Structure probing data (DMS and 2A3) for a 177-nucleotide construct. For 2A3, 527 sequencing reads were counted. 2A3 adducts were read by reverse transcription with SuperScript II with manganese. For DMS, 1,250 sequencing reads were counted. DMS adducts were read by reverse transcription with MarathonRT.
RNA sequence: GGGAACGACUCGAGUAGAGUCGAAAAUGUUAAUUUAGGUUUGACCUUACAAGCUGGUGGCGCUGAAGUUGCAAUGACUGGCUGCAAUCCAUUAUCCACUCACGAUGAUGCUGCAGCAGGUGCAGCAAUCGUGCAGUGCGUUCGCGCACUGCACGAUAAAAGAAACAACAACAACAAC
Reactivity to DMS in 0.01 (KOAc 150mM, MgCl2 10mM, bicine 150mM(pH8.5), 24C), signal-to-noise 1, nucleotides 027 to 126: u060g010u060u000a010a220u010u000u000a030g000g000u000u030u030g000a080c060c000u000u020a040c040a110a010g020c020u060g000g030u000g030g000c050g000c040u040g000a070a030g030u010u030g000c120a000a150u020g010a060c110u000g000g000c010u000g040c060a030a060u010c060c010a100u040u000a000u000c010c070a000c070u030c180a070c080g000a060u000g000a110u010g040c300u000g000c000a040g010c070a020g000g010u000g020c030a040g000c000a030
Reactivity to 2A3 in 0.01 (KOAc 150mM, MgCl2 10mM, bicine 150mM(pH8.5), 24C), signal-to-noise 1, nucleotides 027 to 126: u040g040u000u080a200a230u000u170u080a040g010g160u010u110u270g020a030c040c020u070u030a020c000a000a020g000c040u090g040g000u170g000g030c000g000c070u010g090a180a050g020u050u000g000c000a000a080u150g110a290c120u000g040g000c000u000g030c000a040a040u050c040c000a000u060u060a060u020c050c020a050c010u230c040a020c040g000a000u050g000a040u040g000c000u000g000c000a000g040c000a000g240g080u020g000c000a000g000c000a000